Overview:
Chemical mapping of a 177-nucleotide RNA with DMS. Values cover nucleotides 27 to 126. The reactions ran in a buffer of 150 mM KOAc, 10 mM MgCl2 and 150 mM bicine (pH 8.5), at 24 C.

RNA sequence: GGGAACGACUCGAGUAGAGUCGAAAAGAUAUGGAGUCCAGUAUGGAGUUAUGAGAACGUUUUCAACGCUUCGGAAACGAAGCGGUUGAAAACGUUCUCAUAACUAUGAAGUACGGACUCCUAAGUCCAUAAAUUAGCUCUUCGGAGCUAAUUUAUGAAAAGAAACAACAACAACAAC
Reactivity to DMS in 0.01 (KOAc 150mM, MgCl2 10mM, bicine 150mM(pH8.5), 24C), signal-to-noise 2, nucleotides 027 to 126: g000a110u000a300u020g000g000a030g020u000c010c000a140g070u000a000u000g010g020a040g010u000u010a000u000g000a010g010a010a020c000g000u000u000u000u000c010a020a040c000g000c010u000u000c010g010g010a160a100a270c010g010a000a000g000c000g030g010u000u010g010a030a010a010a000c000g020u000u010c000u000c000a000u000a000a000c000u000a120u010g000a130a170g010u000a030c020g000g010a010c000u000c000c010u000a000a060g000u010c060